[RMDB]
RNA sequence: GGGAACGACUCGAGUAGAGUCGAAAAGUUGGGCGACAAACAAUGCCCCCACCAGUUGUUCUUCCAGAAUACUGAUAAAUCCUGCAAUCGGAUUCUCAUCACCGAUGGUUUUUGAGUGUAAAUAGACCAAGCUAGAAGUAUUCGUACUUCUAGCUUGAAAAGAAACAACAACAACAAC
Reactivity to DMS in 0.01 (KOAc 150mM, MgCl2 10mM, bicine 150mM(pH8.5), 24C), signal-to-noise 6, nucleotides 027 to 126: g000u010u000g010g010g020c060g010a090c090a080a130a140c200a110a130u010g000c040c010c000c050c030a060c080c040a050g010u010u010g020u010u000c020u000u000c130c130a090g010a080a050u000a040c040u000g000a110u000a070a070a080u000c010c040u000g010c140a070a040u000c080g010g010a070u000u010c050u010c060a040u000c080a080c050c060g010a050u010g010g010u000u000u000u000u000g000a100g010u000g010u000a030a060a080u010a110g020a130c180
Reactivity to 2A3 in 0.01 (KOAc 150mM, MgCl2 10mM, bicine 150mM(pH8.5), 24C), signal-to-noise 2, nucleotides 027 to 126: g040u100u070g020g030g000c060g030a070c100a030a300a000c040a130a240u170g020c000c000c000c030c000a060c010c000a030g010u110u060g000u020u030c020u210u090c020c010a020g020a100a040u040a060c010u010g010a040u060a130a060a010u020c000c000u050g110c110a020a040u040c080g000g010a030u090u010c040u050c010a070u040c000a040c100c040g050a060u000g000g100u050u060u030u060u050g080a120g000u020g000u110a070a090a070u070a040g050a040c030
Overview:
The record gives the reactivity of an RNA of 177 nucleotides to DMS and 2A3. The data come from the RNA Mapping Database (RMDB), library OK2TST. DMS adducts were read by reverse transcription with MarathonRT. For DMS, 5,963 sequencing reads were counted. The 2A3 profile rests on 1,290 reads. The RNA was probed in 150 mM KOAc, 10 mM MgCl2 and 150 mM bicine (pH 8.5) at 24 C.